This 177-nucleotide RNA was probed chemically with 2A3 and DMS. The reactions ran in a buffer of 150 mM KOAc, 10 mM MgCl2 and 150 mM bicine (pH 8.5), at 24 C. For DMS, 2,671 sequencing reads were counted. The 2A3 profile rests on 2,182 reads.

RNA sequence: GGGAACGACUCGAGUAGAGUCGAAAACACAUGCCAUCAUAUCGGUUUAGAACUCUUAACUCUGAUGGCUUUCGAGUUAUGUGGUGCAUUGAAGCUCUCCCUUCAAUUCAACGUACCGUUCCGUCAAUCAUGUGAGGAGGUUCGCCUCCUCACAUGAAAAAGAAACAACAACAACAAC
Reactivity to 2A3 in 0.01 (KOAc 150mM, MgCl2 10mM, bicine 150mM(pH8.5), 24C), signal-to-noise 2, nucleotides 027 to 126: c050a000c000a050u150g000c010c010a000u000c010a000u040a130u230c050g040g060u030u040u070a060g060a290a220c040u020c020u270u060a010a000c000u000c030u120g020a010u010g020g000c000u020u010u010c030g010a010g000u040u030a100u140g100u120g030g030u020g000c000a020u000u040g040a010a020g000c020u020c030u090c110c020c050u030u010c020a030a050u060u000c010a040a010c020g000u000a030c000c030g020u030u020c020c000g070u080c030a020a120
Reactivity to DMS in 0.01 (KOAc 150mM, MgCl2 10mM, bicine 150mM(pH8.5), 24C), signal-to-noise 4, nucleotides 027 to 126: c150a140c190a080u010g000c020c020a010u010c010a050u010a120u010c220g010g020u020u000u000a070g000a180a190c300u020c040u000u010a010a020c040u000c100u010g000a030u010g010g010c040u000u000u000c070g000a050g010u000u000a050u000g030u000g010g010u010g010c020a060u010u000g010a030a010g000c100u000c050u000c080c080c000u010u000c070a040a080u000u000c010a020a050c050g020u000a020c050c010g000u010u010c000c000g020u010c110a070a130